Chemical mapping of a 177-nucleotide RNA with DMS and 2A3. The 2A3 profile rests on 430 reads. For DMS the reverse transcriptase was MarathonRT. Conditions: 150 mM KOAc, 10 mM MgCl2 and 150 mM bicine (pH 8.5), 24 C. Source: RMDB library OK1LIB, as collected in RNAgym.

RNA sequence: GGGAACGACUCGAGUAGAGUCGAAAAUCAAAAAUAGAUGACGAUCGAAAACUUGAUGAAAAAAUUCAUGUUGAAGAUAAACAUAAACAAAAUGCAGACUCGUCUGAAACGGUGGGAUAUCAAAGUCACGGGACGUAAUGUUCGCAUUACGUCCCGUAAAAGAAACAACAACAACAAC
Reactivity to DMS in 0.01 (KOAc 150mM, MgCl2 10mM, bicine 150mM(pH8.5), 24C), signal-to-noise 1, nucleotides 027 to 126: u080c040a040a300a070a110a030u000a080g000a000u000g150a050c050g040a000u000c030g000a130a150a000a000c020u000u030g010a030u050g070a010a040a000a090a040a120u030u030c020a000u000g070u030u000g010a160a180g000a010u000a050a170a070c080a030u000a090a090a190c300a060a020a020a040u000g000c090a160g050a070c120u000c020g000u000c000u010g000a020a040a010c020g000g020u040g010g040g000a050u000a080u000c150a000a060a030g000u000c000
Reactivity to 2A3 in 0.01 (KOAc 150mM, MgCl2 10mM, bicine 150mM(pH8.5), 24C), signal-to-noise 1, nucleotides 027 to 126: u200c130a000a000a010a010a000u200a120g030a000u050g030a010c140g000a050u000c000g170a000a000a070a000c050u010u010g050a070u120g170a170a000a000a000a160a180u130u050c000a010u000g050u000u080g100a300a090g000a000u030a030a150a000c000a010u090a070a160a000c000a070a050a000a000u160g060c120a030g130a160c000u050c040g000u030c070u040g000a060a060a060c000g010g030u050g000g020g010a050u100a000u220c030a160a060a000g000u120c050